[RMDB]
The data come from the RNA Mapping Database (RMDB), library OK3TST.
An RNA of 207 nucleotides, treated with 2A3 and DMS and read out base by base.
RNA sequence: GGGAACGACUCGAGUAGAGUCGAAAAGGAGUGAGAGGGCCCCUGGGAACACUGAGGCAUGGAAUCCUCUGGGUCUACCAGUAAUGGCAGCAGGUGGAAAUCAUACCAGUGGGCUUCCAGAAGAUGCUGGAGAGAGGGUUCCUGCAUGAAGGCAGGGCUAUUGCUGAGCUUUCGAGCUCAGCAAUAGAAAAGAAACAACAACAACAAC
Reactivity to 2A3 in 0.01 (KOAc 150mM, MgCl2 10mM, bicine 150mM(pH8.5), 24C), signal-to-noise 2, nucleotides 027 to 156: g000g000a030g030u100g010a120g010a040g010g000g010c000c020c010c040u040g030g020g040a080a000c060a010c090u050g020a050g050g050c040a070u210g000g030a010a040u060c030c080u000c020u020g090g010g070u070c020u090a130c000c010a030g010u090a020a200u050g050g000c010a020g010c020a040g180g040u040g050g040a080a100a000u170c040a040u120a160c000c000a070g090u070g020g090g000c040u010u010c000c000a010g000a060a010g080a030u150g020c000u020g030g000a010g010a000g000a010g040g020g000u020u050c000c030u000g000c010a030u120g080a030a020g050g000c010a010g000g010g000
Reactivity to DMS in 0.01 (KOAc 150mM, MgCl2 10mM, bicine 150mM(pH8.5), 24C), signal-to-noise 1, nucleotides 027 to 156: g010g030a060g030u000g010a090g000a130g040g020g000c110c010c030c080u050g000g020g010a050a130c080a030c030u250g000a160g020g020c140a070u010g060g000a030a150u020c010c010u010c000u000g000g010g020u010c020u000a090c020c000a030g000u010a140a150u000g000g010c030a030g070c060a190g050g050u000g040g000a220a140a110u010c030a120u020a070c030c010a100g000u000g010g010g070c040u010u000c070c060a100g000a130a250g020a080u010g010c020u010g000g010a100g020a130g000a030g050g000g020u000u000c010c000u000g000c060a030u010g000a070a110g030g030c010a080g000g020g030

Description: 2A3 adducts were read by reverse transcription with SuperScript II with manganese. The reactions ran in a buffer of 150 mM KOAc, 10 mM MgCl2 and 150 mM bicine (pH 8.5), at 24 C.